[RMDB]
RNA sequence: GGGAACGACUCGAGUAGAGUCGAAAAUAACACCGCCUUCUUUGUGUAUCUCCAGGGUCAGGAAGCAAACUUUGCAGUUCCACUUAGGAGGCGUUGCUUGGGCACCUAUACUGUUGUGGCUGGCAAGGUGGGAAGUGGAGCUCUGUCCUUAGGGGACGGAGUCAUCUACUUUCGAGUAGAUGACUCCAAAAGAAACAACAACAACAAC
Reactivity to 2A3 in 0.01 (KOAc 150mM, MgCl2 10mM, bicine 150mM(pH8.5), 24C), signal-to-noise 2, nucleotides 027 to 156: u220a000a040c010a050c060c010g030c060c060u030u030c020u080u170u000g120u040g020u100a050u000c020u030c030c000a000g070g040g000u110c020a010g030g170a180a010g000c040a170a160a300c120u160u180u080g010c000a010g000u020u000c050c000a000c000u000u000a040g050g080a070g170g120c000g100u010u030g000c060u070u230g000g010g030c000a000c020c020u120a070u190a300c090u130g140u300u070g040u020g050g040c020u040g020g060c020a050a070g100g020u090g050g080g000a030a000g010u010g030g000a020g000c000u000c040u040g010u010c010c050u030u040a100g000g010g000g020a010c020
Structure probing data (2A3) for a 207-nucleotide construct. The RNA was probed in 150 mM KOAc, 10 mM MgCl2 and 150 mM bicine (pH 8.5) at 24 C. The data come from the RNA Mapping Database (RMDB), library OK3TST. For 2A3 the reverse transcriptase was SuperScript II with manganese.